[RMDB]
RNA sequence: GGGAACGACUCGAGUAGAGUCGAAAAGAUUUACGGCGGGAAAGGGAAACGCGCCGAGGUCCCGGGUGCGGCCCCGACCGAACGGCGCGUCCCGGGUGCGGCACCGACCGAAACCGCCGGAAAGAAACCUGGUAGUACUAUUCGUAGUACUACCAGGAAAAGAAACAACAACAACAAC
Reactivity to DMS in 0.01 (KOAc 150mM, MgCl2 10mM, bicine 150mM(pH8.5), 24C), signal-to-noise 3, nucleotides 027 to 126: g000a170u000u010u000a050c020g000g000c000g010g020g000a090a130a280g020g000g000a100a100a090c060g020c020g010c000c000g030a110g020g020u000c010c120c160g000g020g030u020g020c160g010g000c030c010c050c110g000a060c050c060g010a160a090c050g000g000c000g020c010g000u010c010c020c000g000g010g030u010g020c010g020g010c020a210c120c130g000a130c000c000g000a020a160a200c010c010g000c000c000g010g000a020a030a050g000a090a100a160
Reactivity to 2A3 in 0.01 (KOAc 150mM, MgCl2 10mM, bicine 150mM(pH8.5), 24C), signal-to-noise 1, nucleotides 027 to 126: g000a000u050u050u090a060c010g000g000c020g000g000g070a210a110a120g040g020g000a080a150a030c020g000c000g000c000c010g000a060g080g090u070c130c160c080g010g020g020u160g190c150g150g100c000c000c000c000g010a030c030c030g040a180a080c030g010g000c010g000c010g000u000c010c000c000g000g000g000u090g010c000g020g000c020a090c120c120g060a100c010c020g040a080a050a020c020c040g020c010c020g010g000a010a010a010g000a060a050a000
This 177-nucleotide RNA was probed chemically with DMS and 2A3. For DMS, 1,982 sequencing reads were counted. For 2A3, 1,306 sequencing reads were counted. The reactions ran in a buffer of 150 mM KOAc, 10 mM MgCl2 and 150 mM bicine (pH 8.5), at 24 C.